[RMDB]
RNA sequence: GGGAACGACUCGAGUAGAGUCGAAAAUGUCACAAGUAUCCGUAUCUCUGUGUCCAAGAUGGGAAUGGUACAAGCGCGCCAGGUUGUGUAUGGCAAGCCUUCUGAAGAGGAGCCGGUUGGGCCGCAGAAAGAGGGAGGUAUUCGUACCUCCCUCUUUAAAAGAAACAACAACAACAAC
Reactivity to DMS in 0.01 (KOAc 150mM, MgCl2 10mM, bicine 150mM(pH8.5), 24C), signal-to-noise 2, nucleotides 027 to 126: u000g040u010c030a060c010a090a130g000u000a080u010c030c060g010u000a070u000c010u010c030u010g010u010g010u010c040c050a080a110g020a100u010g000g010g000a070a030u010g010g020u000a060c080a060a110g030c090g000c150g020c020c020a000g040g000u000u010g000u000g010u030a080u000g010g010c030a070a130g000c060c030u000u010c040u010g000a140a130g000a120g000g000a120g030c080c040g010g010u010u000g010g000g010c050c040g010c110a110g020